[RMDB]
RNA sequence: GGGAACGACUCGAGUAGAGUCGAAAAUAAACAGCAGCUCAAGUCUGCCAAAGUCAUAUAUGACUGGUACAUAAGUCAUAUACUACUGCUGUCUACUCAUUUAUGACUUCUCAUCACUCGUCAAAUCCAGCUACGUGGCGUUCGCGCCACGUAGCUGAAAAGAAACAACAACAACAAC
Reactivity to 2A3 in 0.01 (KOAc 150mM, MgCl2 10mM, bicine 150mM(pH8.5), 24C), signal-to-noise 1, nucleotides 027 to 126: u080a000a120a030c020a000g000c000a000g000c020u040c140a170a000g120u080c030u020g110c000c000a030a000a000g010u000c050a000u000a000u000a030u160g000a000c000u040g050g130u300a090c020a040u230a100a000g000u000c000a000u040a010u000a000c160u090a080c000u000g030c020u020g050u000c000u000a000c000u010c010a010u030u150u050a080u080g070a060c000u030u000c020u010c010a120u060c000a090c100u010c000g060u150c110a000a000a110u000c000